[RMDB]
RNA sequence: GGGAACGACUCGAGUAGAGUCGAAAAAACUUCGGGAAAAGGAUUGGCUCUGAGGGUUGGGCUCGGGGGUCCCGGCCCCGAACCCGUCGGCUGCCGGCGGACUGCUCGAGCUGCUCACGCGGCGAGAGAGGAGAGUCAUAUUCGUAUGACUCUCCUCAAAAGAAACAACAACAACAAC
Reactivity to 2A3 in 0.01 (KOAc 150mM, MgCl2 10mM, bicine 150mM(pH8.5), 24C), signal-to-noise 8, nucleotides 027 to 126: a010a010c060u070u040c040g010g010g030a060a070a030a020g070g030a110u100u130g060g000c020u010c040u090g040a080g020g050g020u090u080g050g010g000c020u020c040g010g000g000g000g010u030c000c010c010g050g010c010c010c000c000g010a030a020c020c000c000g040u020c010g020g030c050u090g040c040c010g010g010c040g020g030a040c030u050g030c010u060c010g020a020g000c010u020g010c010u030c020a050c060g030c020g030g000c030g010a040g010a000
Reactivity to DMS in 0.01 (KOAc 150mM, MgCl2 10mM, bicine 150mM(pH8.5), 24C), signal-to-noise 6, nucleotides 027 to 126: a070a060c060u010u010c050g010g000g000a060a090a090a070g010g000a080u020u010g010g000c030u000c030u010g020a100g010g000g010u010u010g010g010g010c020u000c000g020g000g000g010g010u000c010c010c000g010g000c090c250c010c010g000a010a040c060c010c020g010u010c020g000g020c090u000g010c030c020g000g010c100g010g000a070c030u010g010c000u000c010g010a130g010c020u000g000c020u000c090a090c140g010c040g010g010c020g000a130g010a150
Record summary:
Chemical mapping of a 177-nucleotide RNA with 2A3 and DMS. The reactions ran in a buffer of 150 mM KOAc, 10 mM MgCl2 and 150 mM bicine (pH 8.5), at 24 C.